[RMDB]
RNA sequence: GGGAACGACUCGAGUAGAGUCGAAAAAGUGCUAUAAGGCUAUGAAUGCAUAUCCUCUUGUAGUCACUCCUCUUGUUUCAGCAGGCAUAUUUGGUGUAAAACCAGCUGUGUCUUUUGAUUAUCUUAUUAUCUUAAUUAAGUUCGCUUAAUUAAGAUAAAAAGAAACAACAACAACAAC
Reactivity to DMS in 0.01 (KOAc 150mM, MgCl2 10mM, bicine 150mM(pH8.5), 24C), signal-to-noise 3, nucleotides 027 to 126: a090g000u000g020c000u000a040u000a030a020g010g000c080u000a020u000g010a300a160u000g020c030a020u000a020u010c030c030u000c040u000u000g010u010a020g000u010c030a020c010u000c030c020u000c230u010u000g010u000u000u000c030a020g010c100a020g010g000c010a010u000a010u000u010u000g000g010u000g000u010a100a070a160a020c010c000a020g020c060u000g020u000g000u000c010u010u010u010u010g000a060u010u010a060u000c020u000u000a130u000
Reactivity to 2A3 in 0.01 (KOAc 150mM, MgCl2 10mM, bicine 150mM(pH8.5), 24C), signal-to-noise 1, nucleotides 027 to 126: a000g010u000g000c010u010a020u020a040a010g020g000c010u010a040u040g090a300a160u220g200c020a000u030a050u120c010c010u050c060u000u010g010u010a000g100u120c040a010c000u030c000c010u050c070u140u170g120u100u090u000c000a010g020c010a000g020g030c000a000u050a020u030u030u010g010g000u020g000u050a120a220a010a020c000c000a000g000c000u000g000u000g020u000c000u020u000u030u010g010a040u060u180a080u150c010u000u040a010u130